[RMDB]
This 177-nucleotide RNA was probed chemically with 2A3 and DMS.
The reactions ran in a buffer of 150 mM KOAc, 10 mM MgCl2 and 150 mM bicine (pH 8.5), at 24 C.
For 2A3, 4,749 sequencing reads were counted.
For 2A3 the reverse transcriptase was SuperScript II with manganese.
It was measured as part of the RMDB library OK1LIB.
RNA sequence: GGGAACGACUCGAGUAGAGUCGAAAAUUAAACGAAUUUUAAGUUGAUAACAAUUGGUUAAACAUUGUUCAAACAUCACAAUGAUAAAGCAUAUUAUCAGUAUUGUAGUGUGUGGAAAAUGACAGCCCAUCUCUAUGGGAUUCGUCCCAUAGAGAUGAAAAGAAACAACAACAACAAC
Reactivity to 2A3 in 0.01 (KOAc 150mM, MgCl2 10mM, bicine 150mM(pH8.5), 24C), signal-to-noise 6, nucleotides 027 to 126: u060u060a050a050a020c030g030a060a070u140u090u040u140a170a040g020u040u030g120a300u080a110a030c020a030a040u180u080g020g020u050u100a100a210a030c000a000u000u030g040u090u040c060a120a080a020c010a020u110c030a010c010a050a040u010g000a030u020a060a070a000g180c090a040u080a110u190u050a000u010c000a000g150u140a150u070u070g020u030a030g010u010g010u020g010u030g050g040a060a020a000a050u060g030a030c060a010g020c000c000
Reactivity to DMS in 0.01 (KOAc 150mM, MgCl2 10mM, bicine 150mM(pH8.5), 24C), signal-to-noise 5, nucleotides 027 to 126: u020u070a060a070a130c120g020a090a070u010u020u020u010a070a220g000u000u000g000a110u010a030a040c060a030a140u040u020g010g010u000u010a120a120a190c020a000u000u010g010u000u010c030a060a020a030c040a020u020c060a010c010a020a040u000g010a000u000a010a020a150g010c180a090u050a080u020u000a010u000c010a100g020u030a080u010u010g010u000a030g020u000g000u000g000u010g010g000a010a020a040a020u000g000a090c130a120g000c010c010